[RMDB]
The data come from the RNA Mapping Database (RMDB), library OK3TST.
This 207-nucleotide RNA was probed chemically with 2A3 and DMS.
The 2A3 profile rests on 2,638 reads.
RNA sequence: GGGAACGACUCGAGUAGAGUCGAAAAUGAUGAACGCCCGUGGGGUGACCGACGAGGGCUCGUGGACUGACAACAACAGCGUCUACACGUCAAACCACAAGGGCGCGACCGCGUUUGACUACAACUGGUCGGACCAUCCGAUGGGCAACGCCCUGGCUAAGAUGAUCGUAUUCGUACGAUCAUCUUAAAAAGAAACAACAACAACAAC
Reactivity to 2A3 in 0.01 (KOAc 150mM, MgCl2 10mM, bicine 150mM(pH8.5), 24C), signal-to-noise 4, nucleotides 027 to 156: u100g050a010u070g030a090a050c110g000c020c000c000g020u040g010g040g000g030u000g000a030c000c010g000a000c040g100a020g040g030g010c080u070c050g020u000g010g000a020c060u080g060a050c040a140a010c040a090a030c020a260g060c020g060u000c000u020a010c030a020c050g020u010c020a010a060a070c050c020a070c100a270a190g020g030g000c100g050c060g110a140c020c040g050c040g020u000u010u050g010a040c020u070a050c090a120a040c030u080g020g000u000c020g010g010a100c070c000a010u000c010c010g100a030u030g000g000g000c010a000a020c030g000c000c000c010u010g090g000c030
Reactivity to DMS in 0.01 (KOAc 150mM, MgCl2 10mM, bicine 150mM(pH8.5), 24C), signal-to-noise 2, nucleotides 027 to 156: u010g020a160u000g000a150a180c050g020c010c010c020g070u000g000g110g070g020u000g000a030c020c010g000a020c040g010a060g040g000g030c070u000c050g020u020g040g020a130c020u000g000a180c060a190a160c130a180a220c050a050g030c050g030u000c020u000a240c020a040c120g030u000c020a020a150a060c020c010a080c130a080a140g000g020g030c050g000c200g020a110c050c040g000c100g030u010u020u020g020a120c080u000a090c040a040a060c060u000g040g000u000c030g020g020a090c030c020a050u000c000c040g050a060u000g000g020g050c010a050a020c040g000c000c020c020u000g000g060c190
For DMS, 3,052 sequencing reads were counted.